This 207-nucleotide RNA was probed chemically with 2A3. For 2A3 the reverse transcriptase was SuperScript II with manganese.
RNA sequence: GGGAACGACUCGAGUAGAGUCGAAAACUGCAUCACCUGAUCACUGAUGGCUCAACGGUAUCCGGCCGUACAACUGAAUACUUGUAGCUGCCUUUUGAGCGGGUUGGCUGCAAUCCGAAACGGAGAGAAAACCUAAUUACGUUCGCGUAAUUAGGAACUCACUGAGGUGGUUCGCCACCUCAGUGAGAAAAGAAACAACAACAACAAC
Reactivity to 2A3 in 0.01 (KOAc 150mM, MgCl2 10mM, bicine 150mM(pH8.5), 24C), signal-to-noise 3, nucleotides 027 to 156: c030u060g040c010a040u040c000a010c000c040u040g040a080u060c060a020c050u050g020a020u020g060g000c060u060c110a050a020c020g020g000u040a040u020c000c000g030g000c010c000g070u090a050c060a120a050c070u180g050a090a070u060a230c060u010u050g000u000a000g010c000u010g000c000c000u030u000u080u090g060a040g010c050g000g000g000u230u300g010g000c000u010g000c010a000a020u040c020c020g070a120a110a100c050g030g010a040g010a010g030a070a070a050a060c000c010u010a010a000u000u000a010c010g020u010u050c230g000c000g100u000a000a000u000u000a010g010g000a000a010
The 2A3 profile rests on 2,087 reads. Reactivities are given for positions 27 through 156.